Record summary
This 207-nucleotide RNA was probed chemically with 2A3 and DMS. Values cover nucleotides 27 to 156. DMS adducts were read by reverse transcription with MarathonRT. Source: RMDB library M2RFPK, as collected in RNAgym. The RNA was probed in 150 mM KOAc, 10 mM MgCl2 and 150 mM bicine (pH 8.5) at 24 C. The 2A3 profile rests on 1,431 reads.
[RMDB]
RNA sequence: GGGAACGACUCGAGUAGAGUCGAAAAGCACUAGAGGGCGUAACGGCUGGGUGUAACCCAACUCUAGGUGUGCUGAUUAGCGGGCUUGACUUCGUAACAAAUAGGCACUGGUGGUAAAAAGCAUCCCUGACCAUAUACAUCUUCGGAUGUAUAUGAACUAAGCUCAACGAUUCGUCGUUGAGCUUAGAAAAGAAACAACAACAACAAC
Reactivity to 2A3 in 0.01 (KOAc 150mM, MgCl2 10mM, bicine 150mM(pH8.5), 24C), signal-to-noise 2, nucleotides 027 to 156: g010c000a000c020u040a000g000a030g010g000g000c000g050u060a090a050c060g130g000c040u040g020g000g000u050g090u080a050a050c000c000c000a000a030c030u020c010u010a080g110g010u040g020u030g060c000u000g000a100u060u080a030g010c020g020g000g020c040u060u080g030a140c010u090u070c070g030u010a040a040c010a050a060a120u120a070g040g000c000a000c060u050g070g000u020g000g040u060a060a060a040a000a000g040c010a080u020c000c000c000u030g040a030c030c000a000u000a000u000a000c000a000u010c000u020u070c230g100g000a000u000g010u000a000u000a000u000g010a000a000
Reactivity to DMS in 0.01 (KOAc 150mM, MgCl2 10mM, bicine 150mM(pH8.5), 24C), signal-to-noise 2, nucleotides 027 to 156: g050c010a090c010u010a060g030a080g040g020g010c010g070u000a140a150c160g030g010c000u000g000g000g030u000g040u000a060a300c000c000c020a020a050c000u010c010u000a070g030g000u000g010u000g000c030u010g010a130u000u000a100g010c040g000g000g040c050u030u000g040a070c080u000u000c040g020u010a100a160c050a040a070a120u000a080g000g000c060a060c040u010g000g000u020g030g000u000a020a050a050a050a110g000c060a120u000c000c020c030u000g020a160c070c000a000u000a010u010a050c000a020u010c000u000u000c300g040g000a010u000g050u000a000u000a000u000g010a050a170